[RMDB]
RNA sequence: GGGAACGACUCGAGUAGAGUCGAAAAGGAGCUCGACAUGUUCUUAGGUCAACUAAGGGCAUGUGUAUGUUCUAAGUUGACCUUAGGGCAUACUGUAGUGGUUACCUGUUGUAAUUACUACAGAUAGUAGUUACAACAGGUAAUUACUGUCCGAGCACGAGAGGUCAAUGUUCGCAUUGACCUUUCGAAAAGAAACAACAACAACAAC
Reactivity to DMS in 0.01 (KOAc 150mM, MgCl2 10mM, bicine 150mM(pH8.5), 24C), signal-to-noise 7, nucleotides 027 to 156: g010g000a140g000c000u000c010g010a120c040a030u000g010u000u000c000u000u000a020g020g010u000c090a050a070c000u000a130a050g010g000g010c000a000u000g030u000g020u010a010u000g020u000u000c010u000a100a070g010u000u000g000a070c090c000u000u000a010g010g000g000c000a020u000a040c060u000g020u010a020g030u000g000g010u000u000a010c000c020u000g000u010u000g000u000a010a020u000u000a010c000u000a300c080a220g010a110u000a020g010u000a010g020u000u000a000c000a050a050c050a040g010g010u000a000a000u000u000a010c000u000g000u000c030c010g020a030g030c010a150
Reactivity to 2A3 in 0.01 (KOAc 150mM, MgCl2 10mM, bicine 150mM(pH8.5), 24C), signal-to-noise 6, nucleotides 027 to 156: g110g010a050g000c000u000c000g020a010c010a050u000g000u000u000c000u010u030a010g010g000u040c020a020a010c030u030a020a070g000g010g000c020a020u050g060u070g000u120a040u010g000u000u000c000u010a040a020g000u010u030g020a020c000c000u000u010a000g010g010g000c020a000u040a030c060u120g100u180a010g000u000g010g010u000u000a000c000c000u010g000u000u010g000u000a000a000u010u000a000c010u020a050c030a030g010a010u050a010g000u000a000g000u000u000a000c000a000a000c000a010g000g000u000a000a000u000u000a000c000u000g000u020c080c040g000a000g000c000a010